RNA sequence: GGGAACGACUCGAGUAGAGUCGAAAAGACAACCAUUGGAGCGCCUCGUGCUGGGCGGGCCUAAAACUACAUUUCCCAAGGAUCACAGCAGGCACUAACCGGAAGGGGCGGCCUCAAAUCCAUUGCGUUAGUUAAUGCGGUUCGCCGCAUUAACUAAAAAAGAAACAACAACAACAAC
Reactivity to DMS in 0.01 (KOAc 150mM, MgCl2 10mM, bicine 150mM(pH8.5), 24C), signal-to-noise 3, nucleotides 027 to 126: g000a100c180a090a130c040c050a130u020u040g000g010a050g010c020g000c000c010u040c080g000u040g000c050u030g000g000g010c050g020g020g000c010c010u000a030a100a090a130c100u020a130c190a100u000u020u000c020c000c020a100a150g030g000a040u010c070a110c110a090g020c090a030g030g010c020a080c020u000a300a200c010c070g000g060a100a100g020g000g000g000c070g000g000c050c040u010c020a080a110a060u000c000c010a130u010u020g020c120g000
Reactivity to 2A3 in 0.01 (KOAc 150mM, MgCl2 10mM, bicine 150mM(pH8.5), 24C), signal-to-noise 5, nucleotides 027 to 126: g050a020c050a030a080c020c010a050u020u140g040g010a060g040c020g010c020c010u040c060g100u140g080c120u090g000g030g000c000g030g050g000c000c000u100a090a080a030a020c070u150a020c010a110u030u020u030c000c010c000a020a050g030g000a040u080c050a030c030a110g060c060a000g030g020c020a050c240u050a070a040c020c000g050g000a060a100g030g000g010g000c010g020g020c000c020u060c010a030a050a020u000c000c010a030u030u120g020c060g060
Conditions: 150 mM KOAc, 10 mM MgCl2 and 150 mM bicine (pH 8.5), 24 C. Chemical mapping of a 177-nucleotide RNA with DMS and 2A3. For 2A3 the reverse transcriptase was SuperScript II with manganese. DMS adducts were read by reverse transcription with MarathonRT. Source: RMDB libraries RFM100 and RFMREP, as collected in RNAgym.